RNA sequence: GGGAACGACUCGAGUAGAGUCGAAAAUGGCGACAGUGGUCCAGCCUGCGUGGCUGCCUGCUCACCCUUCUUGGGUGAGAAGCCUAAUUAUUGACAAGGUGUGAAGAGCCGCGUGUGCUCAGUGUGCCGUCUCACGAUUAUUCGUAAUCGUGAGACGAAAAGAAACAACAACAACAAC
Reactivity to DMS in 0.01 (KOAc 150mM, MgCl2 10mM, bicine 150mM(pH8.5), 24C), signal-to-noise 3, nucleotides 027 to 126: u000g000g010c020g000a120c200a040g020u000g010g000u010c170c040a060g030c010c010u000g010c160g000u010g020g020c010u010g040c090c020u000g010c010u000c000a010c000c000c000u000u020c280u010u010g000g000g000u000g010a010g010a020a110g010c020c010u000a090a100u010u000a130u000u010g010a120c140a100a110g000g010u000g000u000g000a110a130g000a060g000c010c020g030c220g000u000g020u000g000c010u000c020a060g020u000g000u000g000c070
Reactivity to 2A3 in 0.01 (KOAc 150mM, MgCl2 10mM, bicine 150mM(pH8.5), 24C), signal-to-noise 3, nucleotides 027 to 126: u070g020g020c030g030a080c060a090g130u040g040g040u170c160c010a000g000c000c010u070g030c150g070u160g040g000c000u010g000c000c010u020g000c000u010c010a010c000c040c000u110u150c110u180u260g020g000g010u000g010a000g020a000a000g000c000c000u030a110a100u160u240a050u050u170g050a060c050a170a070g070g000u060g010u070g130a090a180g000a020g020c000c070g060c130g060u130g040u100g030c010u020c050a070g030u050g010u050g180c030